[RMDB]
RNA sequence: GGGAACGACUCGAGUAGAGUCGAAAAUGGAGAUGGAUGCUGGAUCCUGGAAAACAGGUUUAACGGGUAGGGGGUGGUGCCCCUACCGACGCAUCACUCCAGAUACCAAAAGCAUGCUUCGGCAUGCGUCAAAUUUAGACUUCGGUCUAAAUUUGACAAAAGAAACAACAACAACAAC
Reactivity to 2A3 in 0.01 (KOAc 150mM, MgCl2 10mM, bicine 150mM(pH8.5), 24C), signal-to-noise 6, nucleotides 027 to 126: u020g020g010a020g030a070u120g240g010a010u010g020c040u100g060g050a050u050c000c010u010g030g040a080a180a050a100c010a000g010g000u010u060u080a070a020c070g060g000g000u000a000g010g000g000g000g000u060g030g040u070g070c000c000c000c000u010a000c000c000g000a000c010g000c000a000u000c000a000c000u000c000c000a000g000a020u120a030c010c000a030a080a030a010g000c000a000u000g000c010u050u050c140g060g000c010a000u000g010c010
Reactivity to DMS in 0.01 (KOAc 150mM, MgCl2 10mM, bicine 150mM(pH8.5), 24C), signal-to-noise 5, nucleotides 027 to 126: u000g010g010a040g010a140u010g020g020a020u010g010c000u000g020g010a040u000c000c000u000g010g000a100a070a150a210c010a000g000g000u000u010u000a090a130c210g000g010g010u000a000g000g000g010g010g010u000g020g000u010g010c020c000c000c000u000a000c000c000g010a060c120g000c000a000u000c000a090c000u000c000c010a020g000a130u000a200c000c000a070a050a120a190g010c000a000u000g000c000u000u010c210g020g000c000a010u000g000c000